Conditions: 150 mM KOAc, 10 mM MgCl2 and 150 mM bicine (pH 8.5), 24 C. The record gives the reactivity of an RNA of 207 nucleotides to 2A3 and DMS. DMS adducts were read by reverse transcription with MarathonRT. It was measured as part of the RMDB library OK3TST. 2A3 adducts were read by reverse transcription with SuperScript II with manganese. Values cover nucleotides 27 to 156. For 2A3, 14,845 sequencing reads were counted.
RNA sequence: GGGAACGACUCGAGUAGAGUCGAAAAUGUGGAGAUGCAGGAGAAGAUGCAGAGUGUCAUGCAGCUAAACUUCUGGAAGUCAUCAUUCUUCAGUGCAAAGGAAGGGGAAUUGAUCAGUGCAUUCCACUCUUCGUUCAACUUGUUUUGGAGAGAUUAACCAAGAUACUAGUUUCGACUAGUAUCUUGGAAAAGAAACAACAACAACAAC
Reactivity to 2A3 in 0.01 (KOAc 150mM, MgCl2 10mM, bicine 150mM(pH8.5), 24C), signal-to-noise 9, nucleotides 027 to 156: u160g010u040g030g020a090g000a050u030g030c020a010g010g060a040g010a060a030g030a020u050g010c040a020g040a040g090u100g050u060c040a050u070g010c020a030g010c030u090a100a060a070c010u050u040c010u060g060g050a060a020g060u080c030a040u020c010a040u150u020c020u030u020c020a050g050u040g110c050a040a060a070g070g030a020a040g040g040g000g030a020a030u090u090g030a050u120c050a040g040u020g080c010a020u050u020c020c000a030c020u020c020u040u040c020g060u030u060c030a080a080c060u060u070g030u050u080u040u050g020g010a060g010a010g010a050u090u100a030a020
Reactivity to DMS in 0.01 (KOAc 150mM, MgCl2 10mM, bicine 150mM(pH8.5), 24C), signal-to-noise 5, nucleotides 027 to 156: u000g010u000g020g020a100g020a080u000g030c040a040g010g020a090g020a120a070g000a060u000g010c040a070g010a150g040u000g020u010c090a140u000g020c030a050g020c040u010a050a100a090c030u000u000c030u000g010g020a110a120g010u000c070a080u000c050a100u000u000c030u000u000c030a160g020u000g020c060a060a120a130g010g010a080a070g010g010g010g010a070a040u000u000g030a070u000c050a080g030u000g000c070a190u000u010c050c010a060c010u000c030u000u000c020g010u000u000c030a060a110c070u000u000g000u000u000u000u000g010g000a110g010a120g010a140u000u000a060a300

The DMS profile rests on 16,762 reads.